[RMDB]
RNA sequence: GGGAACGACUCGAGUAGAGUCGAAAAAGAAAUAGCGAUAAUCGUAAGAGAAAUGUCCUUCACAUAGCGCUACGCACAGAACUAUUAGUUGCGCAAUAGCUAUUGAAGGACAUUACCUGCCAAAAAACAAACGAAGAAGUUUCGACUUCUUCGUUUGAAAAGAAACAACAACAACAAC
Reactivity to DMS in 0.01 (KOAc 150mM, MgCl2 10mM, bicine 150mM(pH8.5), 24C), signal-to-noise 3, nucleotides 027 to 126: a090g010a090a050a090u000a090g010c020g010a130u010a070a090u000c060g010u010a070a090g000a090g000a050a040a010u000g000u000c010c000u000u000c000a020c260a010u000a000g010c010g020c100u000a030c010g030c010a040c050a120g010a070a080c210u000a110u010u010a110g000u000u000g010c010g010c010a040a060u010a150g000c010u000a000u000u000g010a020a000g010g000a020c000a000u000u000a060c060c020u000g010c030c120a000a040a100a120a080a130
Reactivity to 2A3 in 0.01 (KOAc 150mM, MgCl2 10mM, bicine 150mM(pH8.5), 24C), signal-to-noise 3, nucleotides 027 to 126: a020g120a000a080a040u130a030g040c020g050a040u170a150a100u250c030g040u070a090a030g050a000g020a080a020a020u020g000u000c000c000u000u000c000a090c020a040u010a000g000c010g040c080u060a010c020g000c000a010c000a050g190a280a040c090u100a190u300u140a100g060u130u100g000c000g000c000a010a090u120a050g000c000u000a010u010u010g000a000a000g000g030a000c000a010u000u000a000c010c000u010g000c000c010a060a190a030a030a010a110
This 177-nucleotide RNA was probed chemically with DMS and 2A3. Values cover nucleotides 27 to 126. Reactivities are rounded to 0.1 and cut off at 0 and 3. The reactions ran in a buffer of 150 mM KOAc, 10 mM MgCl2 and 150 mM bicine (pH 8.5), at 24 C. It was measured as part of the RMDB library M2PK90. The DMS profile rests on 2,679 reads.